[RMDB]
RNA sequence: GGGAACGACUCGAGUAGAGUCGAAAACUGGCCUGUGUGGAAGUACGUGAGUACUUCACUCUCUACGGGAGUAGAGACACACAGAUCGUGGAGCGAUGUCUUGGAACUACUCCCGUAGUUCACGUAAGACUCACGUCUUACCAAGACGCCAGCCACGGUCCCCUGAUACGUUCGCGUAUCAGGGGACAAAAGAAACAACAACAACAAC
Reactivity to 2A3 in 0.01 (KOAc 150mM, MgCl2 10mM, bicine 150mM(pH8.5), 24C), signal-to-noise 2, nucleotides 027 to 156: c000u000g000g000c000c000u020g000u020g000u010g010g030a020a040g020u080a000c000g000u030g000a010g000u270a300c030u070u040c030a020c020u150c000u000c000u000a000c000g000g020g000a000g000u000a000g010a000g050a000c010a000c000a000c010a020g000a000u000c010g000u150g100g100a180g130c010g010a030u000g000u000c000u050u030g000g000a080a160c000u000a000c000u000c000c000c000g000u000a010g020u060u100c200a120c100g030u100a010a000g010a000c000u000c010a030c010g000u000c000u000u010a010c000c000a000a010g010a000c000g020c000c000a000g000c000c010a090c050g050

The data come from the RNA Mapping Database (RMDB), library OK3TST. An RNA of 207 nucleotides, treated with 2A3 and read out base by base. 2A3 adducts were read by reverse transcription with SuperScript II with manganese. For 2A3, 1,185 sequencing reads were counted.